Notes:
Chemical mapping of a 207-nucleotide RNA with DMS and 2A3. Source: RMDB library OK3TST, as collected in RNAgym. DMS adducts were read by reverse transcription with MarathonRT. The RNA was probed in 150 mM KOAc, 10 mM MgCl2 and 150 mM bicine (pH 8.5) at 24 C. 2A3 adducts were read by reverse transcription with SuperScript II with manganese.

RNA sequence: GGGAACGACUCGAGUAGAGUCGAAAAUUGAUUUGAAUAUGUUGAACCAACCUUGCAUCCUGGGGAUGAAGCCACCUUGAUUGUGGUAGAUAAGCAUUUUGAGGUGAUGCUGGAUUCAAUUUGCCAAUAUUUUAUUGAGAAUUUUUACACUGAUGUACGUAGUACGUCCAUUCGUGGACGUACUACGAAAAGAAACAACAACAACAAC
Reactivity to DMS in 0.01 (KOAc 150mM, MgCl2 10mM, bicine 150mM(pH8.5), 24C), signal-to-noise 2, nucleotides 027 to 156: u000u000g000a070u000u020u020g010a090a170u010a090u000g010u000u010g010a060a060c000c040a040a060c060c040u010u000g030c110a130u000c040c110u000g020g030g030g040a180u010g000a110a180g000c030c020a040c010c040u010u000g010a070u010u020g020u000g030g040u000a080g010a130u000a090a180g010c030a030u000u000u000u000g010a070g040g030u000g010a130u000g030c030u000g010g010a150u000u000c040a050a100u000u010u000g030c060c020a060a040u000a040u010u010u010u000a000u010u010g010a180g010a050a020u000u020u000u000u000a010c020a180c080u000g000a090u010g030u000a160
Reactivity to 2A3 in 0.01 (KOAc 150mM, MgCl2 10mM, bicine 150mM(pH8.5), 24C), signal-to-noise 3, nucleotides 027 to 156: u100u040g050a030u100u070u150g080a140a040u160a060u190g040u010u050g010a040a010c020c000a000a040c010c040u070u080g050c000a020u030c000c030u060g000g070g000g020a030u090g030a040a010g000c010c000a010c010c000u050u040g080a060u090u100g020u000g140g000u040a010g030a060u150a070a010g010c010a000u010u020u020u130g040a010g000g010u040g010a040u070g020c040u020g030g020a040u000u070c010a010a080u020u070u180g030c020c010a020a020u050a070u140u210u070u000a110u050u060g010a040g050a040a050u090u070u000u050u110a030c090a050c040u070g030a080u120g070u080a010